[RMDB]
RNA sequence: GGGAACGACUCGAGUAGAGUCGAAAAUUCCACAGCUUUCUUGAACUUCUUCUUCUUCUUCUUCUUCUUCUUAGAUUUCUUUCUCAUUGCCUAUAUCUUUCUUGAUGUGGCACAGAAUAAGUUCAAGUCUUCAUUACCUGUUCGCAGGUAAUGAAGAAAAAGAAACAACAACAACAAC
Reactivity to DMS in 0.01 (KOAc 150mM, MgCl2 10mM, bicine 150mM(pH8.5), 24C), signal-to-noise 3, nucleotides 027 to 126: u000u010c000c010a150c240a080g020c070u010u000u010c000u000u000g000a060a050c020u010u000c000u010u000c010u000u000c020u000u000c040u000u010c010u000u000c050u000u000c040u010u000c010u000u000a120g000a140u000u000u000c060u000u000u000c030u000c030a100u010u020g010c020c000u020a060u010a020u000c000u010u020u030c120u020u000g030a060u000g030u010g000g020c030a050c300a070g000a050a060u030a040a040g000u000u000c030a030a080g000
Reactivity to 2A3 in 0.01 (KOAc 150mM, MgCl2 10mM, bicine 150mM(pH8.5), 24C), signal-to-noise 9, nucleotides 027 to 126: u030u000c010c000a080c020a070g050c010u050u080u050c000u010u050g040a050a030c010u010u010c000u010u000c000u020u000c000u020u000c010u010u000c010u020u010c000u040u000c010u040u000c010u030u050a080g040a170u110u120u000c010u020u080u010c030u020c020a140u090u100g000c000c020u100a060u020a020u120c030u040u280u040c080u110u140g010a020u030g020u030g010g000c030a010c010a030g110a080a040u080a090a020g020u030u020c030a030a010g020